Record summary:
Chemical mapping of a 177-nucleotide RNA with DMS and 2A3. The data come from the RNA Mapping Database (RMDB), library OK2TST.
RNA sequence: GGGAACGACUCGAGUAGAGUCGAAAAUACGAAAGCAAGAGCUUCAUCUAACGAGCCUAACCCGCUAACUUGACGUAUUGGCAUAAGGUUAGCUUCUGGUGCCACACCAGAGGCACCAUAGCGGCCAGUUCCUCCCACAGUUCGCUGUGGGAGGAACAAAAGAAACAACAACAACAAC
Reactivity to DMS in 0.01 (KOAc 150mM, MgCl2 10mM, bicine 150mM(pH8.5), 24C), signal-to-noise 1, nucleotides 027 to 126: u000a070c050g000a170a110a040g000c070a100a080g010a040g010c050u010u000c060a160u000c060u000a050a110c150g000a020g000c050c040u000a140a260c080c020c050g000c110u010a030a080c030u000u000g020a160c080g000u000a080u000u000g050g000c040a140u010a090a120g010g020u000u020a080g000c030u000u020c050u000g000g030u000g040c140c110a110c110a050c070c090a060g000a000g000g020c000a030c020c000a040u000a100g000c090g000g000c050c000a060
Reactivity to 2A3 in 0.01 (KOAc 150mM, MgCl2 10mM, bicine 150mM(pH8.5), 24C), signal-to-noise 2, nucleotides 027 to 126: u110a000c020g060a000a000a000g080c060a100a030g080a060g110c050u160u070c000a050u010c040u140a080a070c050g010a010g020c000c000u010a020a060c020c090c020g000c030u050a070a030c040u040u080g090a030c020g070u090a070u070u120g030g000c040a040u030a120a120g030g070u030u060a040g000c040u040u020c010u000g000g000u040g150c180c010a090c010a010c050c000a010g010a030g090g010c000a000c000c000a000u060a000g030c110g010g010c000c000a030
For 2A3, 1,354 sequencing reads were counted.